An RNA of 207 nucleotides, treated with 2A3 and read out base by base. 2A3 adducts were read by reverse transcription with SuperScript II with manganese.
RNA sequence: GGGAACGACUCGAGUAGAGUCGAAAACGCUGGGAUACGAUGAGCACUGUUUGUCAGCUGAAGCGCGCACGGCUUGGAUUUAACAGCUGCUUAAGUAUCCUGUGCUGAAGCGCGCACGGCAACCGAAAGGUGCGAUAUUGAGGAUUCGUCCUCAAAAUACUCGCUGCUUAUUCGUAAGCAGCGAGUAAAAAGAAACAACAACAACAAC
Reactivity to 2A3 in 0.01 (KOAc 150mM, MgCl2 10mM, bicine 150mM(pH8.5), 24C), signal-to-noise 1, nucleotides 027 to 156: c030g020c010u020g030g030g010a020u010a090c010g030a080u300g020a050g000c000a000c080u000g000u000u000u140g140u140c080a040g000c010u070g050a150a110g000c000g000c040g000c090a000c000g030g070c020u040u090g080g030a090u170u250u160a010a000c000a010g100c230u080g040c010u040u030a130a020g000u010a090u000c000c000u000g000u000g000c000u020g000a190a100g000c000g000c000g000c000a000c000g120g000c000a000a120c010c030g030a030a020a020g000g050u000g000c000g020a030u080a080u190u000g000a000g000g020a000u020u070c230g110u030c040c010u010c020a000a000a130a000